[RMDB]
RNA sequence: GGGAACGACUCGAGUAGAGUCGAAAACCUGCCUGUAAUCCCAGCUACUCAGGAGGCUGAGGCAGGAGAAUUGCUUGAACCUGGGAGGUGAAGGUUGCGGUGAGCUGAGAUCGCGGCCACUGCACUACUCACUAGGUGAUUUCGAUCACCUAGUGAGAAAAGAAACAACAACAACAAC
Reactivity to 2A3 in 0.01 (KOAc 150mM, MgCl2 10mM, bicine 150mM(pH8.5), 24C), signal-to-noise 3, nucleotides 027 to 126: c000c000u000g030c000c020u100g120u280a040a100u050c020c010c020a020g050c030u050a080c000u020c030a020g030g040a150g100g060c020u010g020a020g030g010c020a010g050g010a020g070a020a060u160u110g050c040u080u140g030a070a030c000c000u040g040g020g050a060g060g030u140g050a150a030g060g020u140u090g000c020g000g000u060g000a160g050c040u040g050a080g050a230u140c120g040c000g140g000c010c000a010c050u000g000c000a010c020u050a060
Reactivity to DMS in 0.01 (KOAc 150mM, MgCl2 10mM, bicine 150mM(pH8.5), 24C), signal-to-noise 3, nucleotides 027 to 126: c010c010u010g010c020c010u000g010u020a130a090u010c020c040c010a180g010c030u010a090c040u010c030a020g000g000a210g010g010c040u000g010a050g000g000c020a010g000g010a100g010a080a080u010u000g010c070u010u010g000a090a120c020c010u000g000g020g000a160g030g000u010g010a060a060g000g020u000u010g010c020g010g000u010g010a100g010c030u000g010a130g000a070u000c170g000c020g000g000c000c010a030c060u000g000c030a030c080u010a120
This 177-nucleotide RNA was probed chemically with 2A3 and DMS. The RNA was probed in 150 mM KOAc, 10 mM MgCl2 and 150 mM bicine (pH 8.5) at 24 C. The DMS profile rests on 3,601 reads.